[RMDB]
Conditions: 150 mM KOAc, 10 mM MgCl2 and 150 mM bicine (pH 8.5), 24 C. Structure probing data (2A3) for a 207-nucleotide construct.

RNA sequence: GGGAACGACUCGAGUAGAGUCGAAAAUUGGAGAUUAACAUUCAGCUCCUGGUUACUUUUGCAAAUUUCUGCAGUCAGGUUGAAUUUCUCCUCAGAAUAUGGGAUUUUCUUUCCUAUCACAUUGUCGGGCUACAAAUUUUCUGAACUUCUGUGGUCACACCGCACUACGAUUCGUCGUAGUGCGGUGAAAAGAAACAACAACAACAAC
Reactivity to 2A3 in 0.01 (KOAc 150mM, MgCl2 10mM, bicine 150mM(pH8.5), 24C), signal-to-noise 1, nucleotides 027 to 156: u120u050g000g020a030g000a000u070u100a130a000c000a090u000u050c020a000g090c150u080c110c000u080g000g080u210u090a180c090u060u170u200u030g010c000a050a230a260u130u300u160c110u070g000c000a000g000u080c000a000g020g000u010u000g010a000a080u060u040u040c020u030c020c020u050c030a080g000a070a050u160a090u080g060g000g120a100u090u070u140u070c010u090u080u010c000c000u060a060u200c070a080c100a080u110u130g000u080c080g060g010g000c020u040a010c050a050a170a130u160u070u150u120c110u180g070a120a160c050u090u020c000u070g110u070g000g060u050c020a010
Notes
Source: RMDB library OK3TST, as collected in RNAgym.